Source: RMDB library OK3TST, as collected in RNAgym. Structure probing data (2A3 and DMS) for a 207-nucleotide construct. 2A3 is a SHAPE reagent: it acylates the 2'-hydroxyl of flexible nucleotides of all four kinds. 2A3 adducts were read by reverse transcription with SuperScript II with manganese. In probing experiments dimethyl sulfate is read out at A N1 and C N3, which are open when not base-paired.

[RMDB]
RNA sequence: GGGAACGACUCGAGUAGAGUCGAAAACUUGACGAAACAGUCAUUGAGCUGUAACAUGUUGCUAAAACUUAUUGAGGACAAUGGUGUCAUUGUUAAUGGCAUCAUUUGGCUCUUGAUACUUAUAUUUGUACUAUUAAUUUGUAUCACUAUAUUAAAGUCGAAAAGGAAAGUUCGCUUUCCUUUUCGAAAAAGAAACAACAACAACAAC
Reactivity to 2A3 in 0.01 (KOAc 150mM, MgCl2 10mM, bicine 150mM(pH8.5), 24C), signal-to-noise 4, nucleotides 027 to 156: c030u050u110g040a020c040g090a120a120a000c010a000g030u040c050a290u100u300g030a060g030c010u020g020u080a100a050c030a140u100g010u080u000g020c060u090a060a030a070a060c060u120u110a060u090u150g010a010g000g000a020c020a010a010u000g000g000u010g000u010c000a000u010u100g240u300u300a060a020u010g010g000c000a000u000c000a000u060u000u010g010g000c030u000c000u040u010g010a020u010a040c030u080u040a040u080a130u280u130u180g060u080a060c030u050a080u300u080a130a120u050u130u080g020u010a030u030c010a010c040u100a100u070a060u300u250a110a050a090g140
Reactivity to DMS in 0.01 (KOAc 150mM, MgCl2 10mM, bicine 150mM(pH8.5), 24C), signal-to-noise 1, nucleotides 027 to 156: c080u000u020g030a100c050g040a260a190a130c110a130g050u000c020a150u000u010g000a100g030c020u000g000u010a070a200c140a210u000g010u000u030g000c010u010a080a100a130a200c080u000u010a040u000u010g010a020g000g010a140c080a030a010u010g000g020u000g050u000c010a000u000u000g020u000u010a070a060u010g020g000c010a010u000c010a020u000u000u010g070g020c010u000c000u010u020g010a000u000a040c050u000u000a050u000a140u000u000u000g000u010a070c060u010a160u000u000a120a200u010u000u010g020u000a030u010c000a070c040u010a030u000a040u000u000a010a100a150g010